This 177-nucleotide RNA was probed chemically with DMS and 2A3. For DMS the reverse transcriptase was MarathonRT. The 2A3 profile rests on 1,874 reads. It was measured as part of the RMDB library M2PK50. The reactions ran in a buffer of 150 mM KOAc, 10 mM MgCl2 and 150 mM bicine (pH 8.5), at 24 C.

RNA sequence: GGGAACGACUCGAGUAGAGUCGAAAAUCGGGUUUCUUCGGAAACCCGAAAAUAAAAUCAGCGGUUAAAAAGCUCGCGUUAUUACCGCUGAACGCGAGCUUAAAAGAUCGCAGUUCGCUGCGAUCAACCAUAGUUAUUGCUUCGGCAAUAACUAUGGAAAAGAAACAACAACAACAAC
Reactivity to DMS in 0.01 (KOAc 150mM, MgCl2 10mM, bicine 150mM(pH8.5), 24C), signal-to-noise 2, nucleotides 027 to 126: u000c010g010g000g010u000u000u000c030u000u010c160g000g000a010a010a010c000c000c000g000a000a000a070a110u010a060a070a110a060u000c040a070g030c040g000g000u000u010a070a120a130a070a030g000c000u000c000g030c000g000u010u000a060u010u000a060c080c060g000c040u000g000a010a000c010g000c000g000a000g020c000u000u000a020a090a120a080g010a010u000c000g020c000a010g050u010u010c230g020c010u000g000c000g020a010u000c000a060a130
Reactivity to 2A3 in 0.01 (KOAc 150mM, MgCl2 10mM, bicine 150mM(pH8.5), 24C), signal-to-noise 1, nucleotides 027 to 126: u010c000g000g020g020u010u000u000c000u040u060c190g090g000a000a020a000c030c000c000g010a000a000a000a000u000a000a020a010a030u040c010a030g030c020g100g050u080u130a130a280a120a000a000g000c010u000c000g000c020g010u020u060a060u120u090a030c030c010g000c060u030g000a000a010c000g010c000g010a010g000c000u000u010a020a050a000a030g010a000u010c000g000c010a010g000u020u010c220g010c090u000g050c000g000a010u010c010a000a000